The record gives the reactivity of an RNA of 177 nucleotides to 2A3 and DMS. For DMS, 3,673 sequencing reads were counted. For 2A3, 4,346 sequencing reads were counted. It was measured as part of the RMDB library OK1LIB.
RNA sequence: GGGAACGACUCGAGUAGAGUCGAAAAAGUGGGACUGGCAAUCGAGCCAGAGCUAUUCGUCCUGAAUGGGCGGGGCUGCAGUGGAUCUCAGGAUAUGCAGUCCGCCGUCCAGCCUCAUUCGGCAGAGGGCGCGUCGCAGGUUCGCCUGCGGUGCGCCAAAAGAAACAACAACAACAAC
Reactivity to 2A3 in 0.01 (KOAc 150mM, MgCl2 10mM, bicine 150mM(pH8.5), 24C), signal-to-noise 5, nucleotides 027 to 126: a000g090u160g010g000g090a040c010u010g010g030c010a010a300u190c190g090a030g000c000c000a010g000a000g000c000u020a030u120u150c030g050u020c000c010u060g090a110a060u040g000g000g000c000g000g000g020g010c000u000g010c020a040g060u230g140g160a130u040c100u050c110a060g120g020a050u050a030u150g000c000a000g020u030c000c010g040c020c000g000u000c000c000a000g000c000c000u060c040a140u240u100c060g000g000c020a020g060a100g080
Reactivity to DMS in 0.01 (KOAc 150mM, MgCl2 10mM, bicine 150mM(pH8.5), 24C), signal-to-noise 2, nucleotides 027 to 126: a020g000u000g000g010g000a070c000u000g020g000c000a160a050u040c180g030a130g010c000c000a000g010a100g020c040u000a010u020u000c030g020u010c010c030u030g000a130a070u000g000g050g000c050g000g000g000g000c000u000g000c050a030g000u030g000g000a030u000c020u030c190a180g000g000a000u020a060u000g010c020a000g000u040c020c000g000c000c000g000u000c000c010a090g030c010c020u010c130a140u020u030c170g000g000c060a150g000a070g050